[RMDB]
RNA sequence: GGGAACGACUCGAGUAGAGUCGAAAACUUGGAAGAUAGGUGGAAGCUAAGGGAAGCAAGACAUGGCCCCAAGGUUUCAACAGGAGCAAUCUGCUUAGGACUUUGCUGCUUGGACACUUGGUGUAAUAGCUGCUGCCACUAUGCCUCGAAACUGGUAGAAAAUUAUAGUAUUCGUACUAUAAUUUUCAAAAGAAACAACAACAACAAC
Reactivity to 2A3 in 0.01 (KOAc 150mM, MgCl2 10mM, bicine 150mM(pH8.5), 24C), signal-to-noise 7, nucleotides 027 to 156: c030u030u050g030g020a080a050g040a130u140a080g070g020u040g010g060a050a030g020c030u060a050a080g040g030g020a060a040g030c060a050a020g050a070c060a120u110g070g010c010c010c010c000a020a010g030g000u010u080u180c040a050a040c050a050g040g020a020g010c010a010a040u030c030u070g040c120u160u220a070g040g050a060c050u080u030u070g000c000u020g050c000u020u040g030g010a010c050a010c170u020u020g050g020u050g010u080a110a150u040a110g020c020u040g010c010u020g020c000c000a020c020u040a050u110g020c010c010u030c030g040a080a110a100c030u070g050g020u090a090
Reactivity to DMS in 0.01 (KOAc 150mM, MgCl2 10mM, bicine 150mM(pH8.5), 24C), signal-to-noise 3, nucleotides 027 to 156: c040u000u010g010g010a080a090g010a140u000a030g000g030u000g040g000a080a100g030c040u000a130a150g020g030g010a060a090g020c030a050a110g020a140c050a100u000g030g010c030c040c000c000a020a090g000g020u010u020u010c030a030a090c050a060g000g010a120g020c060a050a070u000c030u010g010c070u010u010a190g020g010a030c030u000u010u000g020c020u010g000c000u000u000g010g000a090c120a070c060u000u000g030g000u010g040u010a050a080u000a060g010c000u000g020c040u010g010c010c030a030c030u000a110u010g020c000c000u000c040g020a100a090a110c050u000g000g010u010a170